Structure probing data (2A3 and DMS) for a 207-nucleotide construct.
The data come from the RNA Mapping Database (RMDB), library OK3TST.
The reactions ran in a buffer of 150 mM KOAc, 10 mM MgCl2 and 150 mM bicine (pH 8.5), at 24 C.
DMS adducts were read by reverse transcription with MarathonRT.
RNA sequence: GGGAACGACUCGAGUAGAGUCGAAAACAGAGCUUUAUCCUCCACAAUUACCGCACCAUGAUGGGGAACCAGCGCAACCCGUUACACGUAAACACGGUGGAGCUGGAGCCUUUACUAACAGACUAUGACGCAGACGAGCACGGCCAAGCCGGCGUGGUGACGGUAGAAGAUUCGUCUUCUACCGUCAAAAAGAAACAACAACAACAAC
Reactivity to 2A3 in 0.01 (KOAc 150mM, MgCl2 10mM, bicine 150mM(pH8.5), 24C), signal-to-noise 6, nucleotides 027 to 156: c040a010g060a030g080c010u070u110u100a080u080c000c020u060c020c020a050c030a070a110u110u070a080c030c020g050c030a040c020c010a050u130g030a100u100g100g000g000g020a040a110c010c000a020g000c020g050c080a040a050c020c000c000g000u030u070a100c210a020c140g100u180a040a170a010c080a000c050g030g010u040g020g070a040g000c000u000g000g000a000g010c000c010u050u070u120a100c040u050a090a060c030a060g090a020c030u070a050u230g050a040c090g000c060a000g020a090c030g030a040g060c060a030c130g040g000c040c050a050a010g020c030c010g000g010c020g000u030g040g030
Reactivity to DMS in 0.01 (KOAc 150mM, MgCl2 10mM, bicine 150mM(pH8.5), 24C), signal-to-noise 2, nucleotides 027 to 156: c030a140g000a080g000c050u030u000u000a080u010c060c000u010c000c020a070c080a110a080u000u000a070c050c030g050c060a070c010c050a130u000g020a110u010g030g020g020g030a050a130c000c020a050g000c040g010c050a070a130c040c010c030g000u000u000a090c110a110c150g000u000a080a070a080c100a030c060g020g020u000g010g020a130g000c000u000g000g010a170g020c020c010u000u000u000a110c080u000a090a150c050a060g000a090c020u000a060u000g020a110c020g010c030a110g020a130c050g020a130g000c030a060c060g040g000c020c030a070a140g000c020c020g020g030c050g000u000g000g000